RNA sequence: GGGAACGACUCGAGUAGAGUCGAAAAAGAAAGAGAGCGUAGCACACACACAGACUAAGUCUGACACACACCUACGCUACAUGUGUGUGUGAAGUCGAGAUAUCGACAAGUGUGAGUGAUGAAAAAAGAGAUUAGACAGAUUCGUCUGUCUAAUCUCAAAAGAAACAACAACAACAAC
Reactivity to 2A3 in 0.01 (KOAc 150mM, MgCl2 10mM, bicine 150mM(pH8.5), 24C), signal-to-noise 5, nucleotides 027 to 126: a000g070a020a060a000g130a010g010a010g060c030g010u010a000g020c010a010c000a000c000a000c000a000c000a020g020a020c030u110a210a060g020u000c010u010g040a010c000a000c000a000c000a010c050c010u030a010c030g040c060u060a020c050a050u080g010u000g000u010g000u000g000u000g010a030a010g000u010c010g020a010g010a130u200a070u150c000g010a010c010a030a050g020u010g000u010g020a050g040u040g040a100u090g030a100a070a020a010a010a010
Reactivity to DMS in 0.01 (KOAc 150mM, MgCl2 10mM, bicine 150mM(pH8.5), 24C), signal-to-noise 5, nucleotides 027 to 126: a080g000a070a060a070g000a070g000a060g020c030g010u000a020g000c000a010c010a080c000a010c010a040c000a030g000a020c030u010a130a130g020u000c010u000g000a060c030a020c000a010c000a010c000c010u000a010c010g030c140u000a070c140a040u000g000u000g020u000g000u000g000u000g000a020a110g000u000c010g010a030g000a180u020a080u000c000g010a010c000a020a030g010u000g030u000g010a080g020u000g010a100u010g000a000a030a060a080a080a110
About this RNA
The record gives the reactivity of an RNA of 177 nucleotides to 2A3 and DMS. For DMS, 8,667 sequencing reads were counted. Source: RMDB library M2PK90, as collected in RNAgym. Values cover nucleotides 27 to 126. The RNA was probed in 150 mM KOAc, 10 mM MgCl2 and 150 mM bicine (pH 8.5) at 24 C. High DMS reactivity at an A or C suggests that its Watson-Crick edge is free.